[RMDB]
RNA sequence: GGGAACGACUCGAGUAGAGUCGAAAAAGACAGAUCACUGGUAUAAAUUUGAUGAUGGAGAUGUAACAGAAUGCAAAAUGGAUGAUGAUGAAGAAAUGAAAAAUCAGUGUUUUGGUGGAGAGUACAUGGGAGAAGUAUUUGAUCACAUGAUGAAGCAUCAUUAUUACUACUUCGGUAGUAAUAAUGAAAAAGAAACAACAACAACAAC
Reactivity to 2A3 in 0.01 (KOAc 150mM, MgCl2 10mM, bicine 150mM(pH8.5), 24C), signal-to-noise 9, nucleotides 027 to 156: a000g050a020c040a020g060a040u100c030a030c040u020g000g050u070a110u070a160a160a100u100u070u080g010a020u010g000a000u010g010g000a020g010a010u020g010u030a050a010c030a070g150a180a050u120g050c070a050a070a050a110u110g050g010a010u010g010a000u010g000a000u020g010a020a030g030a040a100a020u120g050a050a060a030a000a030u110c050a040g020u000g000u050u040u080u080g020g000u010g010g030a030g000a010g020u030a020c040a100u070g020g020g010a060g010a050a000g020u030a070u040u070u070g050a050u080c020a020c030a110u110g030a040u050g020a050a010g070c010a010
Reactivity to DMS in 0.01 (KOAc 150mM, MgCl2 10mM, bicine 150mM(pH8.5), 24C), signal-to-noise 6, nucleotides 027 to 156: a090g010a130c050a100g010a110u000c050a050c040u000g010g040u000a130u000a070a080a160u000u000u010g010a050u000g010a040u010g010g000a040g020a030u010g030u000a080a190c080a150g000a080a090u000g010c060a050a040a130a120u000g010g010a050u000g000a040u000g020a060u010g010a040a050g000a050a070a100u000g010a020a080a070a110a070u000c040a060g020u000g010u000u010u000u010g020g030u000g010g000a090g000a090g030u000a030c050a060u000g020g010g000a080g010a060a080g020u010a080u010u000u000g000a110u000c040a050c050a040u000g000a070u000g010a050a070g020c100a150

The record gives the reactivity of an RNA of 207 nucleotides to 2A3 and DMS. For 2A3 the reverse transcriptase was SuperScript II with manganese. The reactions ran in a buffer of 150 mM KOAc, 10 mM MgCl2 and 150 mM bicine (pH 8.5), at 24 C. DMS adducts were read by reverse transcription with MarathonRT. It was measured as part of the RMDB library OK3TST.